RNA sequence: GGGAACGACUCGAGUAGAGUCGAAAAGGUAGGGCAUUCGUGCCCUACCACACCUCUUAGCAGAUUGGCGAGGACGACGUCGCGGCCCACGUUUACCAACAACUACUCUCUCCUUCGGGAGAGAGAAUAUUCCGUAGACUUUCGAGUCUACGGAAUAAAAAGAAACAACAACAACAAC
Reactivity to DMS in 0.01 (KOAc 150mM, MgCl2 10mM, bicine 150mM(pH8.5), 24C), signal-to-noise 2, nucleotides 027 to 126: g000g000u010a000g020g030g040c000a050u000u020c210g020u000g010c010c000c000u000a010c000c010a040c150a080c030c000u010c100u000u010a070g010c080a150g020a100u020u000g000g010c010g010a090g000g000a060c050g010a060c110g030u000c030g020c040g010g000c010c020c040a220c080g000u000u000u000a090c020c030a090a040c130a060a060c150u010a160c010u000c000u000c010u000c000c000u000u010c140g000g010g020a010g000a020g000a020g010a050a060
Reactivity to 2A3 in 0.01 (KOAc 150mM, MgCl2 10mM, bicine 150mM(pH8.5), 24C), signal-to-noise 2, nucleotides 027 to 126: g000g010u010a020g010g000g000c020a000u020u120c170g110u060g010c010c000c020u000a010c010c000a010c000a000c000c000u000c010u050u100a030g030c010a020g030a300u120u120g050g000c040g020a050g000g060a020c040g010a030c010g060u060c040g000c030g080g070c000c010c000a070c050g050u060u050u070a180c040c020a040a050c010a010a030c060u200a090c000u000c000u000c000u010c000c000u020u060c170g070g000g000a000g010a000g010a000g000a000a000
Chemical mapping of a 177-nucleotide RNA with DMS and 2A3. The 2A3 profile rests on 2,202 reads. For DMS, 1,662 sequencing reads were counted. The RNA was probed in 150 mM KOAc, 10 mM MgCl2 and 150 mM bicine (pH 8.5) at 24 C.